RNA sequence: GGGAACGACUCGAGUAGAGUCGAAAAAGGCUGAAGUCAUAGGUUUUGCCCAACAUCAAGCAUUACUUAUUCCACUUGGUGAAAUGUACGGGAUAUCUUCUAAUACUGAAGUUAGCCCGACAGGGACGCUAUGCACAAGUUUCGACUUGUGCAUAGCAAAAGAAACAACAACAACAAC
Reactivity to 2A3 in 0.01 (KOAc 150mM, MgCl2 10mM, bicine 150mM(pH8.5), 24C), signal-to-noise 3, nucleotides 027 to 126: a000g060g000c050u030g070a090a000g050u070c020a060u110a070g050g030u020u050u060u090g020c000c030c010a020a040c000a030u060c020a020a010g020c030a080u070u120a100c040u150u140a100u200u090c050c020a030c050u030u020g060g000u050g050a070a060a080u080g010u030a150c010g000g000g020a000u010a030u000c000u030u010c010u030a140a190u130a300c160u060g010a010a000g000u000u010a020g040c000c000c000g000a010c010a010g040g000g000a010c090
Reactivity to DMS in 0.01 (KOAc 150mM, MgCl2 10mM, bicine 150mM(pH8.5), 24C), signal-to-noise 3, nucleotides 027 to 126: a060g010g010c040u000g010a110a130g020u020c070a070u000a150g000g000u000u000u000u000g030c020c000c010a100a300c070a040u000c080a070a060g000c100a080u000u010a130c110u000u010a110u010u000c090c100a110c020u000u010g020g030u000g010a080a060a090u010g010u010a080c030g010g000g010a030u000a000u000c010u000u000c000u000a070a170u010a170c230u000g000a010a010g010u010u000a020g010c000c000c000g010a040c020a050g020g010g000a070c180
Conditions: 150 mM KOAc, 10 mM MgCl2 and 150 mM bicine (pH 8.5), 24 C. The record gives the reactivity of an RNA of 177 nucleotides to 2A3 and DMS. For DMS the reverse transcriptase was MarathonRT. For DMS, 2,705 sequencing reads were counted. Values are in units of 0.01, from 0 to 300, in steps of 10. Source: RMDB library OK2TRN, as collected in RNAgym.